[RMDB]
RNA sequence: GGGAACGACUCGAGUAGAGUCGAAAACCAAAAAGCGAAAAAAGUGAGAGGCCCUAGGGGCUUCUCGGCUCGUCGUCGACGAAGGGUCUAGAAGCCUGGGUCGGGCGGGAGCGCGCGGCUGUGAGUACCGUAUAGUAAUGUUCGCAUUACUAUACGGAAAAGAAACAACAACAACAAC
Reactivity to 2A3 in 0.01 (KOAc 150mM, MgCl2 10mM, bicine 150mM(pH8.5), 24C), signal-to-noise 1, nucleotides 027 to 126: c000c010a060a020a040a040a070g070c130g100a120a110a000a030a000a020g100u160g040a020g010a020g000g030c020c000c180u260a110g090g000g000g180c000u000u020c020u010c000g020g040c000u000c010g180u060c000g040u020c020g020a060c010g050a030a070g020g060g000u000c020u040a140g080a300a010g090c000c100u110g080g000g050u020c000g030g050g000c000g000g010g000a030g000c020g000c030g020c010g020g030c050u120g040u130g190a030g030u040a050
Reactivity to DMS in 0.01 (KOAc 150mM, MgCl2 10mM, bicine 150mM(pH8.5), 24C), signal-to-noise 2, nucleotides 027 to 126: c000c010a080a050a060a160a130g020c030g000a010a060a040a060a040a090g000u010g000a030g000a040g000g000c000c000c000u010a110g030g030g010g000c010u000u000c000u010c010g020g020c030u000c050g010u010c010g010u000c050g000a050c030g000a180a220g000g010g000u000c050u010a160g000a130a210g000c030c030u000g000g000g010u010c050g040g020g020c030g000g020g000a040g000c030g040c030g020c010g000g010c090u000g020u000g010a080g020u010a120
The data come from the RNA Mapping Database (RMDB), library VIROID. Chemical mapping of a 177-nucleotide RNA with 2A3 and DMS. DMS adducts were read by reverse transcription with MarathonRT. For 2A3 the reverse transcriptase was SuperScript II with manganese. Values are in units of 0.01, from 0 to 300, in steps of 10.